[RMDB]
RNA sequence: GGGAACGACUCGAGUAGAGUCGAAAACAUGUUGAGCACUGCGGCACGGAGUCGGGCGACAGCAGUUCGCCUUUGGAUCUAUCUGAUGCGCAAACCCUGGACCAGCCUUUAAAUCUAUCCCUGGCCGGACGAUAGUUUCGUUCGCGAAACUAUCGUCAAAAGAAACAACAACAACAAC
Reactivity to 2A3 in 0.01 (KOAc 150mM, MgCl2 10mM, bicine 150mM(pH8.5), 24C), signal-to-noise 2, nucleotides 027 to 126: c070a060u110g010u080u170g050a040g000c020a020c070u090g010c030g070g000c060a040c080g000g000a050g000u030c020g030g030g000c010g000a000c040a060g190c020a020g080u110u100c020g030c030c000u040u120u090g050g000a020u020c010u030a040u020c030u060g050a080u100g080c070g000c010a000a010a120c000c000c000u020g020g000a050c030c050a030g010c010c010u070u050u040a080a110a020u080c030u080a040u070c000c020c000u010g060g050c010c010g030
Reactivity to DMS in 0.01 (KOAc 150mM, MgCl2 10mM, bicine 150mM(pH8.5), 24C), signal-to-noise 1, nucleotides 027 to 126: c050a140u000g010u000u000g030a140g040c070a050c150u000g020c100g000g000c100a050c000g000g000a030g040u020c040g000g020g000c000g000a080c060a080g010c200a220g000u040u000c030g000c010c000u000u040u030g000g000a040u000c070u010a030u040c070u020g060a080u010g010c040g000c010a060a140a020c100c040c000u000g000g010a030c010c020a050g010c000c000u000u000u000a000a160a010u000c010u000a050u000c080c020c010u000g000g000c070c030g000
This 177-nucleotide RNA was probed chemically with 2A3 and DMS.
The 2A3 profile rests on 1,115 reads.
The RNA was probed in 150 mM KOAc, 10 mM MgCl2 and 150 mM bicine (pH 8.5) at 24 C.
2A3 adducts were read by reverse transcription with SuperScript II with manganese.